An RNA of 207 nucleotides, treated with 2A3 and DMS and read out base by base.
Conditions: 150 mM KOAc, 10 mM MgCl2 and 150 mM bicine (pH 8.5), 24 C.
The DMS profile rests on 6,588 reads.
It was measured as part of the RMDB library OK3TST.
For 2A3 the reverse transcriptase was SuperScript II with manganese.
DMS (dimethyl sulfate) methylates the pairing face of unpaired adenines and cytosines.

[RMDB]
RNA sequence: GGGAACGACUCGAGUAGAGUCGAAAACGUGCACAUCAACAGCGUUUGCUACGUGGUGGGGAACGGAGCGCGGGUGAUCGUGGAGUGCGAGCACAACGCGGUGUUCAACGUGGCGGGGCGACGUCGGCCCGUUUCCAUCUACAGCAUGUGGGCGGUGUCAUGUUAUGUCAUUCGUGACAUAACAUGAAAAAGAAACAACAACAACAAC
Reactivity to 2A3 in 0.01 (KOAc 150mM, MgCl2 10mM, bicine 150mM(pH8.5), 24C), signal-to-noise 9, nucleotides 027 to 156: c020g020u090g060c040a000c010a100u100c050a040a190c060a110g070c050g070u090u160u180g030c040u070a070c100g040u070g010g060u060g010g050g010g020a020a010c020g030g060a150g050c200g000c030g070g020g020u030g020a140u050c030g020u050g050g140a150g060u170g040c040g010a030g020c010a010c030a120a200c120g030c050g090g030u050g030u050u060c050a060a030c050g040u070g040g010c020g000g010g030g010c030g040a080c030g050u080c030g060g040c000c000c000g000u010u010u000c010c000a020u000c020u070a040c020a030g040c020a030u050g010u050g020g050g000c020g010g040u040g020
Reactivity to DMS in 0.01 (KOAc 150mM, MgCl2 10mM, bicine 150mM(pH8.5), 24C), signal-to-noise 2, nucleotides 027 to 156: c030g020u000g000c060a090c090a140u000c040a100a110c020a130g000c020g000u000u010u000g020c030u000a060c090g030u000g020g050u010g000g000g020g010a060a060c020g000g010a230g030c020g000c010g000g000g050u000g000a040u000c050g020u000g030g020a150g040u010g060c020g010a050g000c010a030c010a080a060c040g000c030g030g000u040g020u000u010c050a110a060c000g010u000g010g030c050g000g020g020g040c070g030a060c060g020u010c010g010g010c020c000c000g010u000u000u000c010c010a150u000c040u000a070c030a130g010c060a070u000g020u000g010g000g100c050g000g010u010g000